RNA sequence: GGGAACGACUCGAGUAGAGUCGAAAAGGCUGGUCCGAAGGUAGUGAGUUAUCUCAAUUGAUUGUUCACAGUCAGUUACAGAUUGAACUCCUUGUUCUACUCUUUCCCCCCUUCUCACUACUGCACUCUAGGUACGGUUCUUCGGAACCGUACCUAGAAAAGAAACAACAACAACAAC
Reactivity to 2A3 in 0.01 (KOAc 150mM, MgCl2 10mM, bicine 150mM(pH8.5), 24C), signal-to-noise 2, nucleotides 027 to 126: g010g010c030u000g080g060u020c000c010g020a090a050g000g000u030a000g020u000g140a010g000u110u170a060u100c000u060c050a030a040u030u070g000a050u070u060g130u160u090c110a050c010a220g000u000c020a000g000u090u080a110c010a020g000a020u050u050g000a110a020c000u050c040c000u070u100g050u080u000c010u000a060c020u030c010u020u040u010c020c000c010c000c000c000u010u000c040u050c000a050c000u090a010c000u010g020c050a050c060u000
Structure probing data (2A3) for a 177-nucleotide construct. For 2A3 the reverse transcriptase was SuperScript II with manganese. For 2A3, 882 sequencing reads were counted. Source: RMDB library RFM100, as collected in RNAgym.